[RMDB]
RNA sequence: GGGAACGACUCGAGUAGAGUCGAAAAUGCCGGGCAAGUCCCCCCAUGCCCGUUCCACGGCUCCCUUCCAGAAGGGCGGGGGUGGCCUGGAGCGUCGGGCCCCAGCAGUCCGUGGAAUUCACCCUCUGAACCAACCGCUUCGGCGGUUGGAAAAGAAACAACAACAACAAC
Reactivity to DMS in 0.01 (KOAc 150mM, MgCl2 10mM, bicine 150mM(pH8.5), 24C), signal-to-noise 3, nucleotides 027 to 129: u010g040c210c060g020g020g030c010a110a000g060u040c040c020c000c030c080c030a300u030g010c040c040c030g020u030u060c020c000a000c040g050g020c090u040c000c000c000u010u010c000c000a190g070a000a000g030g030g030c190g080g000g010g000g070u050g010g040c030c010u000g020g050a070g050c190g020u010c030g000g110g030c060c000c020c080a150g030c140a010g000u030c020c000g060u060g030g000a060a160u040u080c090a160c000c000c000u030c090u080g040a130a170
Reactivity to 2A3 in 0.01 (KOAc 150mM, MgCl2 10mM, bicine 150mM(pH8.5), 24C), signal-to-noise 2, nucleotides 027 to 129: u030g030c000c000g010g010g000c010a000a050g230u160c000c000c000c000c000c000a000u030g000c000c000c000g000u050u000c000c010a010c000g000g030c000u080c000c010c000u000u020c060c050a140g060a240a150g120g000g000c080g070g000g000g000g030u100g010g000c000c020u090g010g060a090g010c060g090u180c070g000g000g000c000c000c000c000a000g000c000a000g020u000c000c000g020u020g000g090a000a000u070u070c000a110c010c000c000u050c010u060g060a050a070